The record gives the reactivity of an RNA of 207 nucleotides to 2A3 and DMS. It was measured as part of the RMDB library OK3TST.
RNA sequence: GGGAACGACUCGAGUAGAGUCGAAAAACAAGAAUUUUUACGUGUACAAAAUUUACGUUUACUAUAGACAGAUCGAGAAGCAGAAAGUCGAGAGACUCGAUUCAUCGUUGACAGUCAGCAACAAUACGGUGUACGUCAAGUUGACGAUCAUCACGUCCUUCCGUUCCUAAUUCGUUAGGAACGGAAGAAAAGAAACAACAACAACAAC
Reactivity to 2A3 in 0.01 (KOAc 150mM, MgCl2 10mM, bicine 150mM(pH8.5), 24C), signal-to-noise 4, nucleotides 027 to 156: a000c060a050a050g160a140a100u060u080u090u140u150a050c040g020u060g040u100a080c060a040a230a040a060u100u130u060a040c040g010u000u050u050a020c010u030a030u040a080g030a020c030a020g020a030u030c020g020a000g030a130a010g060c060a020g050a160a100a010g160u150c120g020a010g000a000g000a100c010u000c020g010a010u030u040c040a030u010c030g030u030u040g030a020c050a050g050u060c020a020g020c040a040a040c000a080a050u100a060c070g000g010u000g010u040a030c010g020u010c040a060a050g080u080u110g050a000c000g030a070u060c040a000u020c020a020c030g040u040c000
Reactivity to DMS in 0.01 (KOAc 150mM, MgCl2 10mM, bicine 150mM(pH8.5), 24C), signal-to-noise 1, nucleotides 027 to 156: a080c010a160a290g040a100a140u010u020u000u000u000a110c050g010u010g000u000a250c160a090a070a060a080u000u000u000a110c300g000u000u000u000a070c040u000a100u000a120g020a120c040a160g020a060u000c040g000a100g000a050a050g010c010a150g000a030a050a050g040u010c000g000a200g000a230g050a010c040u000c070g000a090u010u010c050a030u010c000g050u000u000g010a100c000a110g000u000c010a050g040c000a040a040c090a110a170u010a060c120g050g030u050g000u000a070c060g000u000c040a070a270g000u000u000g000a060c000g020a010u000c010a060u000c080a050c140g000u000c010
Description:
The RNA was probed in 150 mM KOAc, 10 mM MgCl2 and 150 mM bicine (pH 8.5) at 24 C. For 2A3 the reverse transcriptase was SuperScript II with manganese.